Conditions: 150 mM KOAc, 10 mM MgCl2 and 150 mM bicine (pH 8.5), 24 C. An RNA of 177 nucleotides, treated with DMS and 2A3 and read out base by base. For 2A3 the reverse transcriptase was SuperScript II with manganese.
[RMDB]
RNA sequence: GGGAACGACUCGAGUAGAGUCGAAAAUCGCGGUGAUCCAUACGGGCGAAGAACUCUCCAUCAUAUCCCAUCUGAGCGAAGAUCGAGGCCUGCUCACGGGAGUGACCGAAGGGAUCGAUCUGCCAAAAUGGUAAUCCCGUUUCGACGGGAUUACCAUAAAAGAAACAACAACAACAAC
Reactivity to DMS in 0.01 (KOAc 150mM, MgCl2 10mM, bicine 150mM(pH8.5), 24C), signal-to-noise 2, nucleotides 027 to 126: u010c040g010c060g020g020u000g000a060u020c040c040a090u000a090c210g040g000g000c060g010a070a090g000a060a120c040u010c020u020c000c050a210u030c080a040u000a170u010c020c000c010a080u020c150u030g010a070g000c010g000a120a070g000a040u000c020g010a020g000g020c030c010u000g000c140u000c000a000c030g040g030g010a140g010u000g020a000c120c100g000a150a070g040g010g020a090u000c000g000a030u000c020u010g000c020c080a040a080a080
Reactivity to 2A3 in 0.01 (KOAc 150mM, MgCl2 10mM, bicine 150mM(pH8.5), 24C), signal-to-noise 1, nucleotides 027 to 126: u120c030g000c040g090g020u080g040a020u040c010c000a040u100a160c070g040g010g030c000g050a060a020g030a110a070c000u000c000u020c000c000a030u010c040a010u040a190u110c000c040c010a010u050c080u100g070a120g020c040g070a120a020g020a060u050c010g010a040g040g160c040c010u060g010c040u020c020a010c010g040g070g050a200g000u030g030a080c020c050g070a000a070g000g000g050a000u020c010g010a030u040c000u010g000c000c000a140a120a020

For DMS the reverse transcriptase was MarathonRT. It was measured as part of the RMDB library OK2TST. The 2A3 profile rests on 781 reads.